This 207-nucleotide RNA was probed chemically with 2A3 and DMS. Reactivities are given for positions 27 through 156. For 2A3 the reverse transcriptase was SuperScript II with manganese. It was measured as part of the RMDB library RNAMAK. For 2A3, 2,992 sequencing reads were counted.

[RMDB]
RNA sequence: GGGAACGACUCGAGUAGAGUCGAAAACCUAACUUCGGUUAGGCUGUUCGCGUACUACCAUAUACCAGCACCUGAGCGUUGAAAUUCUUCCCAAAUAGGAAGAAUGGAGCUCCUGUGCUCCCUAUAUGGUAUCGCCAUGGAGUUGGUUCGCCAACAAAGAUAUCUACAGUUUCGACUGUAGAUAUCUAAAAGAAACAACAACAACAAC
Reactivity to 2A3 in 0.01 (KOAc 150mM, MgCl2 10mM, bicine 150mM(pH8.5), 24C), signal-to-noise 4, nucleotides 027 to 156: c000c010u010a010a000c010u050u060c250g140g000u020u020a000g020g000c060u120g070u100u170c080g000c040g020u080a130c060u010a010c010c000a010u010a000u000a020c070c100a000g000c010a000c010c060u030g010a010g000c000g110u210u030g020a020a010a000u010u000c020u010u030c000c020c020a220a300a200u300a130g000g010a000a000g000a000a000u000g010g010a000g000c000u000c000c010u000g000u000g000c000u000c010c000c010u000a000u000a010u000g000g010u000a010u140c010g000c020c020a120u200g140g030a100g040u020u030g040g020u050u080c160g080c120c010a010a000c040a020a200
Reactivity to DMS in 0.01 (KOAc 150mM, MgCl2 10mM, bicine 150mM(pH8.5), 24C), signal-to-noise 2, nucleotides 027 to 156: c000c010u000a020a010c000u000u010c280g040g020u000u000a010g000g010c010u010g010u000u010c030g010c010g050u000a090c170u000a010c010c010a030u000a020u000a020c020c010a040g020c010a020c000c030u010g000a020g050c010g030u040u000g020a150a130a100u000u010c010u000u000c000c010c010a050a150a240u010a050g000g000a030a000g000a030a000u000g000g000a250g000c020u000c000c030u000g000u000g000c010u000c040c000c020u010a000u000a010u000g030g000u010a040u000c020g040c040c070a230u000g030g000a300g000u010u000g000g000u000u000c150g000c040c020a010a050c050a120a130